[RMDB]
RNA sequence: GGGAACGACUCGAGUAGAGUCGAAAAUAUUAUUGCCGGUGAAAGUAGUAGUAAGAUUAUUGAGAUGGGCUUGGGUAGACUAUAUAGUGAAGUUAUUCAACUUACUAAAUAAUUUUCAUAGAGGAAAGAGAUCGAUAAUGUUCGCAUUAUCGAUCUCAAAAGAAACAACAACAACAAC
Reactivity to DMS in 0.01 (KOAc 150mM, MgCl2 10mM, bicine 150mM(pH8.5), 24C), signal-to-noise 1, nucleotides 027 to 126: u050a060u000u000a010u020u010g030c070c050g040g030u000g030a060a090a030g010u010a030g000u030a020g010u000a000a030g000a110u000u020a090u000u010g000a070g000a020u020g000g000g030c100u000u000g000g000g000u000a050g010a090c050u020a030u030a090u030a090g010u000g000a030a030g030u000u020a050u030u030c040a040a080c020u000u000a020c030u050a010a050a000u030a020a060u010u020u000u020c010a040u010a090g000a170g020g020a090a050a250
Reactivity to 2A3 in 0.01 (KOAc 150mM, MgCl2 10mM, bicine 150mM(pH8.5), 24C), signal-to-noise 2, nucleotides 027 to 126: u110a020u100u120a040u030u180g020c000c040g000g000u060g050a100a100a030g010u050a050g000u000a000g020u030a030a010g040a220u120u200a110u160u270g050a030g010a040u090g040g060g040c120u110u030g000g080g000u040a070g080a070c090u000a020u040a020u020a210g050u010g210a090a000g050u030u000a120u160u040c020a000a010c020u000u030a000c000u070a000a010a050u060a010a080u060u140u050u010c000a000u060a040g190a040g170g000a160a000a000